[RMDB]
RNA sequence: GGGAACGACUCGAGUAGAGUCGAAAAGACGGGUCCGGGUGCUCACAGGGACGGGUGGGUGCUGGGUCCCUAGGGACAUCGCCGGGCACACGGGUAGGGCCCAACGGGUCUAGGGCUAACCAGGGUAACUAGGCCCAAAAUUCGUUUUGGGCCUAGUAAAAGAAACAACAACAACAAC
Reactivity to DMS in 0.01 (KOAc 150mM, MgCl2 10mM, bicine 150mM(pH8.5), 24C), signal-to-noise 1, nucleotides 027 to 126: g020a130c130g010g000g010u000c000c010g000g010g010u000g000c010u020c050a140c140a080g020g020g000a010c070g000g000g010u020g010g000g000u000g020c110u020g010g010g000u030c010c000c000u000a060g000g010g020a100c130a070u030c160g020c030c030g030g000g050c020a060c070a050c010g020g000g010u000a100g010g000g000c010c000c040a090a040c100g000g030g030u000c040u000a070g000g000g010c090u010a070a160c160c120a070g000g000g030u000a050